Notes
Chemical mapping of a 177-nucleotide RNA with DMS and 2A3. Conditions: 150 mM KOAc, 10 mM MgCl2 and 150 mM bicine (pH 8.5), 24 C.
RNA sequence: GGGAACGACUCGAGUAGAGUCGAAAAGGAAAUCAAAAUUAGAGAAGUGAAGGCUGAGAUUAGAUAGGUAAUGAAGGUAGGAUAUUGUCACUGGUUUACGGUAACCACCACCACCAAAAUAAAAAAACAAUUAUACCGUGUUCGCACGGUAUAAUUGAAAAGAAACAACAACAACAAC
Reactivity to DMS in 0.01 (KOAc 150mM, MgCl2 10mM, bicine 150mM(pH8.5), 24C), signal-to-noise 3, nucleotides 027 to 126: g000g000a050a060a060u040c080a040a060a120a090u000u000a070g010a060g010a080a050g020u010g000a050a080g000g010c050u010g000a060g010a080u010u000a020g000a040u010a040g010g000u010a060a040u010g010a060a030g000g010u000a050g010g000a070u000a060u010u010g010u010c070a080c080u000g000g010u000u000u010a050c060g000g010u010a040a060c080c030a030c020c010a070c060c050a070c040c080a040a060a070a060u050a000a000a030a050a030a070a090
Reactivity to 2A3 in 0.01 (KOAc 150mM, MgCl2 10mM, bicine 150mM(pH8.5), 24C), signal-to-noise 2, nucleotides 027 to 126: g060g020a000a070a070u110c060a070a070a030a150u260u150a090g020a000g030a240a020g020u040g070a050a000g030g000c010u020g040a010g000a120u070u040a010g030a060u070a040g040g060u050a050a040u110g010a030a030g000g010u040a040g050g000a040u030a040u120u130g060u060c020a010c100u020g040g000u060u020u080a030c040g000g010u000a040a000c010c000a010c010c010a000c000c010a010c000c000a030a060a080a070u180a060a150a020a000a000a000a010
Reactivities are given for positions 27 through 126. For DMS the reverse transcriptase was MarathonRT.